[RMDB]
RNA sequence: GGGAACGACUCGAGUAGAGUCGAAAAGAUCCAAGGUUCGCCUUGGAUCCAAGGCGGCGAGUCUCGCUCAGCGCCGCGCGACAGCGCGCAGCGCAGCUGGAACAAUUUCGCCAUUCGUGGCGAAAAAAGAUACAGACAAAUUCGUUUGUCUGUAUCUAAAAGAAACAACAACAACAAC
Reactivity to DMS in 0.01 (KOAc 150mM, MgCl2 10mM, bicine 150mM(pH8.5), 24C), signal-to-noise 7, nucleotides 027 to 126: g000a020u000c000c000a020a030g010g020u000u010c240g020c000c000u000u000g010g010a010u000c010c040a080a130g010g010c040g010g020c020g000a060g010u000c040u000c160g010c020u000c090a120g010c020g020c010c010g030c010g020c010g010a180c300a190g010c050g030c010g020c020a030g010c010g030c000a040g010c070u000g000g010a100a090c090a100a140u000u000u000c000g010c000c000a040u000u010c180g010u000g010g010c000g000a000a000a020a060a090
Reactivity to 2A3 in 0.01 (KOAc 150mM, MgCl2 10mM, bicine 150mM(pH8.5), 24C), signal-to-noise 4, nucleotides 027 to 126: g000a000u000c000c000a010a000g050g000u040u110c220g080c050c000u000u000g000g000a000u000c000c000a030a020g040g010c020g010g010c030g030a030g040u010c030u030c100g040c010u050c070a080g000c010g000c010c010g000c000g000c000g040a090c090a250g300c030g000c000g000c080a020g000c010g000c020a020g020c040u090g060g060a090a030c030a090a120u030u020u010c000g000c000c010a010u030u070c240g050u030g000g000c000g030a020a010a000a000a000